[RMDB]
RNA sequence: GGGAACGACUCGAGUAGAGUCGAAAAUUCGGUCCUCUGGAGCGGACCGUGUGCUCCGUCAGGAUGUGGAGGUUUCGCGCCCUCCUAUGCGCGUAUGUACAUCGAUACGGUUAUGUCGCCUUUGUGUCGGCGUUUGACACUUACACAUACCGGAUAACGAUAGCAUUACGUUCGCGUAAUGCUAUCGAAAAGAAACAACAACAACAAC
Reactivity to DMS in 0.01 (KOAc 150mM, MgCl2 10mM, bicine 150mM(pH8.5), 24C), signal-to-noise 3, nucleotides 027 to 156: u000u000c020g040g010u010c000c000u010c080u000g020g010a110g060c300g000g020a080c000c090g000u000g030u000g010c010u000c040c020g020u000c060a010g010g010a040u010g000u000g000g000a050g010g020u000u000u000c060g040c070g020c090c010c040u000c010c030u000a040u000g030c030g020c020g010u000a060u000g020u000a080c090a140u010c060g020a180u000a070c100g040g000u000u000a050u000g020u000c070g010c000c070u010u010u000g020u010g020u000c040g030g010c100g040u000u000u010g030a020c010a040c010u000u000a040c020a030c000a040u000a090c000c020g000g030a050u010a070a230
Reactivity to 2A3 in 0.01 (KOAc 150mM, MgCl2 10mM, bicine 150mM(pH8.5), 24C), signal-to-noise 5, nucleotides 027 to 156: u060u020c010g020g000u010c030c010u030c100u220g150g100a120g070c040g010g010a010c010c020g010u020g030u060g030c030u020c020c020g070u070c050a040g000g010a030u020g010u030g030g000a020g010g020u000u020u060c010g000c010g000c000c020c000u000c010c010u030a040u030g040c110g000c000g020u140a030u090g040u030a050c070a130u100c160g110a130u060a190c060g040g010u090u020a010u060g130u120c020g010c020c010u080u140u030g190u070g020u040c020g010g040c020g030u050u040u130g000a000c010a010c000u010u080a020c010a000c000a010u130a300c000c000g000g000a060u080a150a050